[RMDB]
RNA sequence: GGGAACGACUCGAGUAGAGUCGAAAACAGCGCCCGGCUGCAGAUGCGCAUUUAUCAGGGCGCAUCACUGAGCUGGCACUGGAGCGCAGGCGUUUUGGCUACCGUCGCAUCUGGCAGUUGCUGCGCCCCAGACAGAGUUGUUCGCAACUCUGUCUGGAAAAGAAACAACAACAACAAC
Reactivity to DMS in 0.01 (KOAc 150mM, MgCl2 10mM, bicine 150mM(pH8.5), 24C), signal-to-noise 1, nucleotides 027 to 126: c030a110g020c030g000c120c100c010g000g030c000u000g000c070a080g010a030u000g010c000g000c040a050u000u000u000a110u020c300a170g000g000g010c010g000c010a020u000c090a130c110u000g000a140g020c010u010g000g000c020a080c050u010g000g020a030g000c020g010c040a030g000g030c040g000u010u000u000u010g010g010c030u000a020c060c040g030u000c110g070c130a060u030c080u010g010g000c000a000g020u000u010g000c040u000g000c000g000c030c010
Reactivity to 2A3 in 0.01 (KOAc 150mM, MgCl2 10mM, bicine 150mM(pH8.5), 24C), signal-to-noise 1, nucleotides 027 to 126: c000a000g000c000g030c020c010c010g000g050c030u090g050c050a020g050a040u000g010c000g010c030a000u110u210u140a280u200c110a080g070g070g030c020g000c010a000u050c000a000c040u060g000a000g040c030u000g050g000c010a010c090u090g040g020a080g030c040g040c060a000g040g020c030g020u030u030u160u120g030g000c000u050a020c000c070g070u110c050g050c090a140u020c070u070g050g040c000a020g000u060u080g010c010u020g000c020g000c050c010